[RMDB]
RNA sequence: GGGAACGACUCGAGUAGAGUCGAAAACCAGAAGACAAGCGGUUGCAACUUAAAGACUACUUUAUCAAGCAGAUUAGGGCGUACAUGGAUGGUAAAAUACCGGUUGCCACUGUCUCUAAUGAGUCAAGUUACGAUAGUGAUUCGUCACUAUCGUAACAAAAGAAACAACAACAACAAC
Reactivity to DMS in 0.01 (KOAc 150mM, MgCl2 10mM, bicine 150mM(pH8.5), 24C), signal-to-noise 8, nucleotides 027 to 126: c000c000a170g010a110a100g010a060c100a110a070g010c140g000g000u000u000g010c040a050a120c050u010u010a060a090a110g010a080c070u010a070c050u000u000u000a040u030c130a060a080g000c100a040g010a090u010u010a100g010g000g030c060g010u000a030c100a060u010g010g010a070u010g000g000u010a050a060a060a100u020a040c080c040g000g020u000u000g000c010c030a060c040u000g010u010c010u000c050u000a050a060u010g000a080g000u010c050a070a110
Reactivity to 2A3 in 0.01 (KOAc 150mM, MgCl2 10mM, bicine 150mM(pH8.5), 24C), signal-to-noise 9, nucleotides 027 to 126: c010c000a030g080a060a030g040a020c050a080a020g020c030g060g010u030u030g010c030a050a030c010u040u120a110a060a010g050a040c020u070a050c020u160u080u040a090u110c060a090a050g070c020a020g070a100u090u160a060g060g030g020c030g040u060a030c050a100u180g080g010a060u070g020g080u130a120a120a030a010u110a080c020c000g020g000u020u020g010c000c010a040c020u030g050u040c000u000c000u050a100a100u130g020a010g040u050c060a080a010